RNA sequence: GGGAACGACUCGAGUAGAGUCGAAAAUUAAAAUGAUCCCAGCUGAAAUGGCGGACGCUAUGGUCUCCCUGACGGGAGGGACUCCAGUCCAAAGAGUCGACUAUCCCACCAUAAGUUUGCCAAAAAAGAUCCUACACUUGUUCGCAAGUGUAGGAUCAAAAGAAACAACAACAACAAC
Reactivity to DMS in 0.01 (KOAc 150mM, MgCl2 10mM, bicine 150mM(pH8.5), 24C), signal-to-noise 2, nucleotides 027 to 126: u000u000a050a080a090a150u010g010a140u000c000c000c000a150g020c160u010g020a050a110a150u010g000g010c010g020g000a010c000g000c180u000a020u020g000g010u010c000u000c010c000c000u000g060a060c200g010g010g040a020g020g000g000a030c020u010c110c140a160g010u000c070c100a050a160a130g000a010g000u000c000g010a080c250u010a100u000c010c000c030a170c020c000a010u010a030a080g000u000u000u010g030c010c030a010a010a070a050a120a150

The record gives the reactivity of an RNA of 177 nucleotides to DMS. The RNA was probed in 150 mM KOAc, 10 mM MgCl2 and 150 mM bicine (pH 8.5) at 24 C. DMS adducts were read by reverse transcription with MarathonRT.